[RMDB]
RNA sequence: GGGAACGACUCGAGUAGAGUCGAAAAUUAAAAGGGAACGACUCGAGUAGAGUCGAAAAGACGCUGAACUCAUGGAGCGCAAGACGAAUAGCUACAUAUUCGACAUGAGGGCGCCGUUCGCAAAAAACCUAAGAUAUGGGUUCGCCCAUAUCUUAGGAAAAGAAACAACAACAACAAC
Reactivity to 2A3 in 0.01 (KOAc 150mM, MgCl2 10mM, bicine 150mM(pH8.5), 24C), signal-to-noise 2, nucleotides 027 to 126: u160u300a210a250a100a300g000g000g000a010a000c000g000a000c000u000c000g000a000g010u020a000g010a000g000u000c000g000a000a000a000a000g020a000c010g000c030u070g050a130a030c010u000c010a010u010g020g050a120g150c180g010c140a030a010g090a030c020g000a020a000u020a030g030c070u140a080c060a130u040a050u020u010c000g000a000c020a010u000g010a030g020g000g000c010g000c010c000g010u020u010c100g020c190a060a060a020a020a030a040
Reactivity to DMS in 0.01 (KOAc 150mM, MgCl2 10mM, bicine 150mM(pH8.5), 24C), signal-to-noise 2, nucleotides 027 to 126: u000u020a110a020a020a180g010g000g000a020a050c010g000a000c010u000c000g010a020g000u000a060g000a010g010u000c000g000a000a020a060a120g000a030c030g010c000u000g000a150a200c000u000c000a010u000g000g010a100g030c150g000c170a060a070g000a210c060g020a040a000u000a010g000c110u020a130c170a140u000a040u000u000c000g000a130c000a020u000g000a020g000g010g010c050g020c070c030g000u000u000c040g000c110a010a030a030a060a130a080